[RMDB]
RNA sequence: GGGAACGACUCGAGUAGAGUCGAAAACAUUUCAGAUUUAUUUGGGUUCCAUCUUGGAUGAUUUACGCCAUGCAUACAUUCUACUGUUUUUCCUUUAUUCGCGGAACCAUAUGAAUUAUUGCGCAUUUUAUCUUUAUGACGGCAAUCACGACAAAUAUCGUCGUCUUGAAUUCGUUCAAGACGACGAAAAAGAAACAACAACAACAAC
Reactivity to 2A3 in 0.01 (KOAc 150mM, MgCl2 10mM, bicine 150mM(pH8.5), 24C), signal-to-noise 2, nucleotides 027 to 156: c000a020u030u170u130c100a070g000a130u000u210u070a110u030u200u190g040g010g000u010u000c010c010a010u040c100u060u060g060g020a020u010g020a020u000u020u060a010c000g000c000c000a010u100g060c000a070u040a080c000a070u020u080c020u100a070c040u070g080u070u000u000u060u000c020c000u130u070u040a090u200u220c070g020c070g040g010a040a030c010c000a000u040a070u100g030a010a020u130u070a040u020u090g040c040g000c010a010u010u000u050u050a140u030c080u020u180u040a080u130g040a020c030g020g050c030a000a020u110c130a020c100g110a000c050a070a110a040u190a050